The record gives the reactivity of an RNA of 177 nucleotides to DMS and 2A3. Source: RMDB library M2PK50, as collected in RNAgym.

RNA sequence: GGGAACGACUCGAGUAGAGUCGAAAAAGGAUAGGAUUCGUCCUAUCCUACACCAAAACCUGCUGGCGGUGCGGCGCCGGCCCCGCCGGGAAGGCCGCCUUAUUGGUAGCUGGUUCGCCAGCUACAACUUUGUUAUAGAAUUCGUUCUAUAACAAAGAAAAGAAACAACAACAACAAC
Reactivity to DMS in 0.01 (KOAc 150mM, MgCl2 10mM, bicine 150mM(pH8.5), 24C), signal-to-noise 5, nucleotides 027 to 126: a020g000g010a020u000a000g000g000a040u000u010c200g010u000c000c000u000a000u010c000c000u000a030c140a200c050c050a100a050a080a160c120c050u010g020c110u000g010g020c020g010g010u000g010c040g010g000c070g010c030c020g010g000c040c050c260c090g000c030c010g000g010g010a110a110g010g000c010c010g020c030c040u010u000a050u010u010g020g000u000a000g010c010u000g010g000u000u010c220g010c000c000a010g000c000u000a010c020a070a120
Reactivity to 2A3 in 0.01 (KOAc 150mM, MgCl2 10mM, bicine 150mM(pH8.5), 24C), signal-to-noise 4, nucleotides 027 to 126: a000g010g000a000u000a000g000g000a010u020u090c170g030u030c060c000u010a000u000c000c000u000a010c010a030c010c000a050a060a040a130c010c040u090g030c030u040g070g010c010g030g050u130g270c030g050g000c090g060c050c000g000g030c040c010c000c150g000c010c000g010g000g020a040a020g120g020c000c020g160c000c010u040u080a110u070u170g080g000u000a000g000c010u010g000g090u040u040c270g030c050c010a010g010c000u010a000c000a000a020
For DMS the reverse transcriptase was MarathonRT.